[RMDB]
An RNA of 177 nucleotides, treated with 2A3 and DMS and read out base by base. 2A3 adducts were read by reverse transcription with SuperScript II with manganese. For 2A3, 2,862 sequencing reads were counted. The RNA was probed in 150 mM KOAc, 10 mM MgCl2 and 150 mM bicine (pH 8.5) at 24 C. The data come from the RNA Mapping Database (RMDB), library VIROID.

RNA sequence: GGGAACGACUCGAGUAGAGUCGAAAAGCCUCGUCGUCGACGAAGGGGUGCAUUCCGAAGAGCUGGCCUGGCGUCGUCCGGCUCCCUCGACCGCACCGGAGCGCUAGAAAAGGUCCUCGGACUUUCUCCAUUGCUUAAAGUUCGCUUUAAGCAAUGGAAAAGAAACAACAACAACAAC
Reactivity to 2A3 in 0.01 (KOAc 150mM, MgCl2 10mM, bicine 150mM(pH8.5), 24C), signal-to-noise 2, nucleotides 027 to 126: g030c000c010u000c010g030u010c010g050u070c110g120a300c020g030a100a050g020g000g000g010u060g030c040a140u150u000c000c010g030a060a010g000a010g100c040u040g000g020c000c000u010g020g000c000g010u050c020g230u010c040c000g020g010c030u040c030c010c010u160c050g090a100c050c010g020c020a010c010c030g000g010a000g010c010g020c010u010a020g060a010a070a020a000g030g050u000c000c000u010c000g020g000a060c000u040u050u030c070u030
Reactivity to DMS in 0.01 (KOAc 150mM, MgCl2 10mM, bicine 150mM(pH8.5), 24C), signal-to-noise 1, nucleotides 027 to 126: g030c000c000u000c030g030u010c020g030u000c190g000a070c040g000a060a080g000g000g010g040u000g010c130a130u010u010c020c020g020a030a090g000a020g030c020u010g010g050c300c000u010g050g010c000g030u020c100g000u000c000c010g000g000c030u000c030c040c020u010c080g010a090c070c050g000c150a140c000c020g010g000a080g030c030g000c030u000a040g010a080a250a150a010g010g000u000c010c030u010c060g000g000a060c160u000u000u000c060u010